[RMDB]
An RNA of 177 nucleotides, treated with DMS and 2A3 and read out base by base. For 2A3, 5,110 sequencing reads were counted.
RNA sequence: GGGAACGACUCGAGUAGAGUCGAAAAGUUAGCCGCGAGAAGUCGAGAGUGAGGCGAUGAAUGCCGACGGAAUUGUACUGCAAGCAAGCGUGAAGAAACACCUAACGGUUGACUGCUGGUGGUAUGGCAAUGAUUGGGUUUUCGAACCCAAUCAUUGAAAAGAAACAACAACAACAAC
Reactivity to DMS in 0.01 (KOAc 150mM, MgCl2 10mM, bicine 150mM(pH8.5), 24C), signal-to-noise 9, nucleotides 027 to 126: g020u000u000a110g030c010c010g010c060g010a100g010a080a090g010u010c030g000a090g010a130g020u000g010a120g010g010c030g010a110u000g000a100a080u010g010c030c020g010a140c120g000g000a070a080u010u000g010u010a080c050u000g010c050a060a070g010c050a050a070g000c060g000u000g010a100a090g000a100a080a100c130a050c050c030u010a100a070c110g010g010u000u010g010a070c050u000g000c040u000g000g020u000g010g000u000a040u000g010g010
Reactivity to 2A3 in 0.01 (KOAc 150mM, MgCl2 10mM, bicine 150mM(pH8.5), 24C), signal-to-noise 4, nucleotides 027 to 126: g070u070u080a030g030c020c000g040c040g030a050g020a090a030g050u070c080g010a000g000a030g120u070g040a060g020g070c030g010a050u100g120a080a070u120g030c010c020g020a040c020g010g030a030a010u030u030g040u100a080c030u050g000c020a060a020g020c000a010a060g050c010g010u070g040a070a050g050a050a130a010c030a030c010c010u030a060a000c030g040g100u040u060g050a060c020u050g000c010u010g020g020u010g000g030u070a080u110g080g000

For 2A3 the reverse transcriptase was SuperScript II with manganese.
Reactivities are given for positions 27 through 126.
Source: RMDB library OK2TRN, as collected in RNAgym.
Conditions: 150 mM KOAc, 10 mM MgCl2 and 150 mM bicine (pH 8.5), 24 C.